RNA sequence: GGGAACGACUCGAGUAGAGUCGAAAAAGGCCCAGAGGCUCAGGAUAGGGGUGCUUUCAGGGAAGUCCUGAGGAGAGAACAGUGUCCUUGGGGCCAGAAGAGGCUGUCCCACAAGGGAGAAAGCCACGACAAAUAGCAGUUUCGACUGCUAUUUGUCAAAAGAAACAACAACAACAAC
Reactivity to 2A3 in 0.01 (KOAc 150mM, MgCl2 10mM, bicine 150mM(pH8.5), 24C), signal-to-noise 1, nucleotides 027 to 126: a000g070g010c010c000c040a010g070a080g080g000c020u020c000a040g030g000a040u070a070g130g010g000g050u060g030c030u050u100u070c020a010g040g030g050a230a080g110u130c020c030u010g000a030g040g030a040g000a010g010a030a020c030a040g050u030g030u090c000c000u000u050g020g000g000g000c030c020a010g060a070a010g090a020g030g000c010u060g040u040c000c010c000a050c060a060a090g070g030g000a020g080a110a050a000g030c050c010a050c070
Reactivity to DMS in 0.01 (KOAc 150mM, MgCl2 10mM, bicine 150mM(pH8.5), 24C), signal-to-noise 2, nucleotides 027 to 126: a080g000g010c000c000c010a120g000a220g000g000c010u000c040a050g000g010a060u000a090g000g010g000g020u010g010c030u000u000u010c030a030g000g010g010a160a130g020u010c010c000u010g010a040g000g000a060g000a040g000a150a080c110a070g010u010g000u000c010c010u000u010g020g010g010g010c040c030a070g000a120a120g000a130g000g010c000u000g010u000c010c000c000a100c210a080a110g000g000g000a080g000a020a060a050g000c050c060a060c200
This 177-nucleotide RNA was probed chemically with 2A3 and DMS. For 2A3 the reverse transcriptase was SuperScript II with manganese. For 2A3, 1,536 sequencing reads were counted.